[RMDB]
RNA sequence: GGGAACGACUCGAGUAGAGUCGAAAAGCCGAUUGGUUCGCCAAUCGGCAAAUAAAAGCGCGACAAAUAAAUCCAUCGAGCGCAAGGAAGGAAAAUAAAUAAAAAGCUAAUCCUUCGGGAUUAGCAACAAUCUUUAGUAGUUCGCUACUAAAGAUUGAAAAGAAACAACAACAACAAC
Reactivity to 2A3 in 0.01 (KOAc 150mM, MgCl2 10mM, bicine 150mM(pH8.5), 24C), signal-to-noise 2, nucleotides 027 to 126: g000c000c010g020a000u000u020g040g090u080u130c260g060c080c000a030a000u000c000g020g000c000a000a010a000u010a010a070a010a010g000c000g030c050g140a090c140a040a180a050u230a070a120a040u110c070c030a060u080c070g100a040g080c000g010c050a030a020g090g010a020a060g040g050a130a090a050a030u110a050a130a000u120a050a150a150a020a000g000c000u000a000a020u010c000c020u030u020c080g010g010g000a000u000u000a010g000c000a000a000
Reactivity to DMS in 0.01 (KOAc 150mM, MgCl2 10mM, bicine 150mM(pH8.5), 24C), signal-to-noise 2, nucleotides 027 to 126: g000c000c000g020a050u030u010g030g020u010u000c130g030c010c000a010a000u000c010g050g000c000a020a020a030u010a100a090a160a160g020c020g000c020g020a170c130a080a090a110u000a070a130a150u010c060c030a070u000c050g010a280g020c000g020c030a060a070g000g000a090a080g000g000a050a100a110a090u000a040a050a130u010a020a050a110a190a100g000c000u010a000a000u000c000c000u000u020c250g000g000g000a010u000u000a000g020c000a020a050
This 177-nucleotide RNA was probed chemically with 2A3 and DMS. For 2A3, 1,865 sequencing reads were counted. High 2A3 reactivity points to a flexible backbone, as in loops and unpaired stretches. The data come from the RNA Mapping Database (RMDB), library M2PK50. 2A3 adducts were read by reverse transcription with SuperScript II with manganese. Conditions: 150 mM KOAc, 10 mM MgCl2 and 150 mM bicine (pH 8.5), 24 C.